RNA sequence: GGGAACGACUCGAGUAGAGUCGAAAACGAGCGGAUGCUGGCGCGCGAGAUCCGGCACCGCGACGCCGGCGAGGAAGGCACCUGCGAGGCGGCAGCUGCGCUACUGGGCUUGGCAGACGAGGCCGGGGUACUCCAAUGCAUUCGUGCAUUGGAGUACAAAAGAAACAACAACAACAAC
Reactivity to 2A3 in 0.01 (KOAc 150mM, MgCl2 10mM, bicine 150mM(pH8.5), 24C), signal-to-noise 2, nucleotides 027 to 126: c000g000a010g060c040g000g070a090u170g030c020u010g020g000c020g000c010g020c030g030a030g010a070u040c000c000g000g000c010a000c000c020g000c020g100a010c010g000c020c020g040g000c030g000a050g060g030a040a050g050g020c010a030c050c010u020g020c050g070a100g080g000c040g070g030c020a030g000c010u080g030c090g020c060u060a060c020u070g010g060g000c000u040u050g030g020c030a010g030a060c030g060a090g110g000c010c020g000g000g010
Reactivity to DMS in 0.01 (KOAc 150mM, MgCl2 10mM, bicine 150mM(pH8.5), 24C), signal-to-noise 2, nucleotides 027 to 126: c050g000a120g000c040g000g030a080u000g010c000u000g000g010c050g000c040g010c030g020a160g000a140u010c000c010g020g020c020a240c070c010g010c000g000a080c040g010c000c000g020g000c020g000a070g010g010a120a100g000g000c030a040c090c030u000g000c040g010a140g010g020c060g000g000c030a030g000c060u000g010c060g000c020u010a100c090u000g000g020g000c010u000u010g000g010c040a070g010a080c090g000a090g000g020c020c010g000g010g000